[RMDB]
RNA sequence: GGGAACGACUCGAGUAGAGUCGAAAAGAUAUGGACCGAGGCCAGACAUGUUUCUACUCGGAAACGAGUGAGAAACAACAGCUGGCUCGGUCCUAAGUCAAAGAUAGUUCUGUUCGCAGAACUAUCAGGUUAUAACAAACUUCGGUUUGUUAUAACCAAAAGAAACAACAACAACAAC
Reactivity to 2A3 in 0.01 (KOAc 150mM, MgCl2 10mM, bicine 150mM(pH8.5), 24C), signal-to-noise 5, nucleotides 027 to 126: g010a000u020a010u050g000g000a000c000c000g000a030g160g300c020c000a020g020a090c120a240u150g000u000u000u010c000u010a010c000u000c010g000g000a010a010a000c000g000a000g020u200g160a140g020a020a010a010c030a060a020c140a130g040c000u000g000g000c000u000c000g000g000u020c000c000u000a000a000g000u000c010a020a000a120g000a000u010a000g010u000u020c010u010g040u060u080c300g030c090a000g000a020a010c000u000a010u010c000a000
Reactivity to DMS in 0.01 (KOAc 150mM, MgCl2 10mM, bicine 150mM(pH8.5), 24C), signal-to-noise 5, nucleotides 027 to 126: g000a030u010a150u000g000g010a020c010c000g000a030g030g010c000c000a000g010a050c110a110u010g010u000u000u000c000u000a030c000u010c000g010g000a030a040a070c000g010a020g010u000g010a020g010a010a010a010c000a070a060c170a220g000c000u000g010g000c000u000c010g000g010u010c000c000u000a000a060g000u010c020a130a160a150g000a010u000a010g000u000u000c000u010g010u000u020c240g030c000a010g010a010a010c000u000a000u000c000a050

An RNA of 177 nucleotides, treated with 2A3 and DMS and read out base by base. The RNA was probed in 150 mM KOAc, 10 mM MgCl2 and 150 mM bicine (pH 8.5) at 24 C. For 2A3 the reverse transcriptase was SuperScript II with manganese. DMS (dimethyl sulfate) methylates the pairing face of unpaired adenines and cytosines.